Description:
Chemical mapping of a 177-nucleotide RNA with DMS and 2A3. DMS adducts were read by reverse transcription with MarathonRT. 2A3 adducts were read by reverse transcription with SuperScript II with manganese. The 2A3 profile rests on 1,064 reads. The RNA was probed in 150 mM KOAc, 10 mM MgCl2 and 150 mM bicine (pH 8.5) at 24 C.
RNA sequence: GGGAACGACUCGAGUAGAGUCGAAAACCACUCAUUGAGUGGCCACUUACUGAGUAUGAUUUUACUGAUUAUAAGGUACAACUCUUUGAGAAGUACUUUAAAUAUUGGGAUCAGACGUAUCACGCAACUGGAAUGAAUUGUUCGCAAUUCAUUCCAGAAAAGAAACAACAACAACAAC
Reactivity to DMS in 0.01 (KOAc 150mM, MgCl2 10mM, bicine 150mM(pH8.5), 24C), signal-to-noise 1, nucleotides 027 to 126: c000c000a070c010u000c000a110u000u030g000a020g020u000g000g040c060c090a130c060u020u020a080c130u030g000a090g010u000a050u020g020a060u000u000u010u040a130c040u000g000a000u000u000a300u000a000a010g040g010u000a000c010a050a300c020u000c000u010u000u000g000a030g030a070a300g010u000a020c000u000u000u000a000a100a040u000a050u000u010g000g050g000a010u000c030a030g010a050c040g010u000a050u000c070a050c090g000c160a080a090
Reactivity to 2A3 in 0.01 (KOAc 150mM, MgCl2 10mM, bicine 150mM(pH8.5), 24C), signal-to-noise 2, nucleotides 027 to 126: c000c000a030c000u010c030a300u110u300g020a010g000u010g000g030c030c000a030c040u090u180a000c020u020g020a020g030u080a040u070g030a080u030u080u080u190a090c000u020g010a000u020u040a060u010a050a000g000g000u010a000c000a050a060c020u000c020u060u150u260g020a010g010a000a010g000u000a010c000u000u000u030a030a050a030u180a010u040u030g020g020g000a010u020c030a000g030a050c030g060u070a030u160c070a030c150g100c050a040a100